Chemical mapping of a 177-nucleotide RNA with 2A3 and DMS. Reactivities are rounded to 0.1 and cut off at 0 and 3. DMS adducts were read by reverse transcription with MarathonRT. Conditions: 150 mM KOAc, 10 mM MgCl2 and 150 mM bicine (pH 8.5), 24 C. For 2A3 the reverse transcriptase was SuperScript II with manganese. Source: RMDB libraries RFM100 and RFMREP, as collected in RNAgym.

RNA sequence: GGGAACGACUCGAGUAGAGUCGAAAACCCAAUCAUCGAAAAUGGAGAAACCGACAGUGCACGUUGACGUAGACCCCCAAAGUCCGUUUGUGCUACAACUGCAGAAGAGUUUCCCACAAUUCGAGAUAAUUAAUAACAGAUUCGUCUGUUAUUAAUUAAAAGAAACAACAACAACAAC
Reactivity to 2A3 in 0.01 (KOAc 150mM, MgCl2 10mM, bicine 150mM(pH8.5), 24C), signal-to-noise 9, nucleotides 027 to 126: c000c000c000a010a030u070c060a060u010c000g020a010a010a020a040u070g010g000a200g010a200a010a000c010c010g110a090c040a020g020u010g030c010a010c040g060u120u240g010a010c010g020u050a050g030a030c000c010c010c030c060a050a050a010g020u000c010c000g010u020u080u160g010u010g020c000u070a030c040a130a020c010u020g010c040a030g070a240a010g060a080g010u000u000u000c000c010c000a040c030a030a140u010u010c000g000a000g000a020u040
Reactivity to DMS in 0.01 (KOAc 150mM, MgCl2 10mM, bicine 150mM(pH8.5), 24C), signal-to-noise 8, nucleotides 027 to 126: c010c000c000a150a090u020c080a100u000c010g000a010a020a130a180u010g010g000a130g010a020a010a020c020c010g010a160c090a040g010u010g010c000a010c090g000u010u010g000a060c070g010u020a080g000a100c010c020c040c110c170a060a080a220g010u010c020c050g000u010u010u020g020u000g000c040u030a130c110a080a070c020u000g020c060a070g000a090a070g010a140g010u000u000u010c000c000c000a060c130a070a130u000u000c000g000a030g000a120u000